Chemical mapping of a 177-nucleotide RNA with DMS and 2A3.
RNA sequence: GGGAACGACUCGAGUAGAGUCGAAAACUGUGCCAUCUGUCAAUUUGUUAGAUGAUCAGAGGGGAAAAGAAGAGCUAGAGCAAUGGUUACGGAAUGGUAGCAAUACCAUAUCGUGAUCUCUAAUGAGGUAGCUAUUUAAGUUCGCUUAAAUAGCUACAAAAGAAACAACAACAACAAC
Reactivity to DMS in 0.01 (KOAc 150mM, MgCl2 10mM, bicine 150mM(pH8.5), 24C), signal-to-noise 6, nucleotides 027 to 126: c040u000g010u010g020c060c010a040u000c030u010g000u000c050a090a110u000u000u000g020u000u010a060g010a060u000g010a070u010c050a050g010a090g020g010g010g000a050a080a080a070g010a070a070g010a090g010c050u000a050g000a090g020c210a090a070u010g010g010u000u000a000c000g010g000a040a010u000g000g010u000a000g000c300a080a130u000a010c000c000a010u000a020u000c000g000u000g010a010u000c010u000c080u000a040a080u010g000a090g010
Reactivity to 2A3 in 0.01 (KOAc 150mM, MgCl2 10mM, bicine 150mM(pH8.5), 24C), signal-to-noise 4, nucleotides 027 to 126: c010u010g040u090g100c010c010a040u040c020u030g070u050c040a100a170u050u080u050g100u090u110a070g010a100u050g020a010u080c030a010g010a050g030g030g000g000a070a080a000a020g110a040a000g040a010g050c050u090a020g030a010g070c060a100a170u250g040g000u020u010a000c000g010g010a020a000u010g000g010u000a000g010c000a000a030u010a010c000c010a000u010a030u020c000g000u000g010a010u010c030u000c030u090a140a130u140g020a030g180
The RNA was probed in 150 mM KOAc, 10 mM MgCl2 and 150 mM bicine (pH 8.5) at 24 C.
DMS (dimethyl sulfate) methylates the pairing face of unpaired adenines and cytosines.